[RMDB]
RNA sequence: GGGAACGACUCGAGUAGAGUCGAAAAGAUCAUUUAUGUGAAGGUACUGAGUAAGAGCAAGUAUGUUAGGACCCGAAAGAUGGUGAACUAUGCCUGGAUAGGGUGAAGUCAGAGGAAACUCUGAUGGUCUAUAGAUCGUCUUCGGACGAUCUAUAGAAAAAGAAACAACAACAACAAC
Reactivity to DMS in 0.01 (KOAc 150mM, MgCl2 10mM, bicine 150mM(pH8.5), 24C), signal-to-noise 7, nucleotides 027 to 126: g010a080u010c040a040u010u020u020a050u030g000u020g010a150a070g010g020u000a030c040u000g000a080g020u010a050a060g010a100g010c090a070a060g010u010a030u010g010u010u000a070g000g000a050c030c010c040g010a080a090a070g010a080u010g000g010u000g000a070a070c140u010a060u010g000c020c010u000g000g020a080u010a110g000g020g020u010g010a070a130g000u000c010a010g000a020g000g000a120a060a120c000u000c010u000g010a010u010g000g000
Reactivity to 2A3 in 0.01 (KOAc 150mM, MgCl2 10mM, bicine 150mM(pH8.5), 24C), signal-to-noise 6, nucleotides 027 to 126: g030a040u050c040a040u030u120u170a140u180g090u020g060a050a040g050g010u090a060c040u040g090a030g080u110a070a050g040a000g060c010a050a030g020u020a050u110g070u050u090a060g000g080a010c020c000c000g050a070a050a000g050a020u070g000g040u050g020a050a030c040u050a080u230g020c010c000u020g010g030a060u080a070g050g010g010u030g060a060a020g010u010c010a000g000a010g000g000a040a050a030c000u000c000u000g010a010u040g030g010